[RMDB]
RNA sequence: GGGAACGACUCGAGUAGAGUCGAAAAUUGGAGUUUCAGAAACAAUGCCAGCGAAUUUGACCUAUCAGCAAUGGAUGAAUCAGGUUUUGGAUAAAGUAGAGGCUGCUUUAAAAAGUAAACAUCCAUGACUAUAUGGAAUGUUCGCAUUCCAUAUAGUAAAAGAAACAACAACAACAAC
Reactivity to 2A3 in 0.01 (KOAc 150mM, MgCl2 10mM, bicine 150mM(pH8.5), 24C), signal-to-noise 4, nucleotides 027 to 126: u060u050g050g010a020g040u020u070u060c050a060g120a060a110a020c030a060a040u070g050c030c020a030g040c040g090a060a060u110u030u080g040a050c000c010u050a040u090c030a000g070c050a060a140u090g050g030a060u040g080a020a080u090c070a070g050g060u020u050u110u130g080g010a070u080a150a120a020g030u050a030g060a060g180g000c020u010g010c010u070u030u060a110a110a020a010a000g070u100a030a010a050c000a060u030c010c000a000u040g030
Reactivity to DMS in 0.01 (KOAc 150mM, MgCl2 10mM, bicine 150mM(pH8.5), 24C), signal-to-noise 7, nucleotides 027 to 126: u000u000g010g010a160g010u010u000u000c040a120g010a140a110a090c080a060a060u010g010c040c020a050g010c060g010a070a080u000u000u000g010a080c030c020u010a070u010c080a060g010c130a100a050u000g010g010a150u000g000a070a090u010c080a050g010g000u000u000u000u000g010g010a150u000a030a040a070g010u000a050g010a130g000g010c060u000g010c020u000u000u000a020a040a090a070a070g010u000a040a050a080c050a060u000c010c010a040u000g000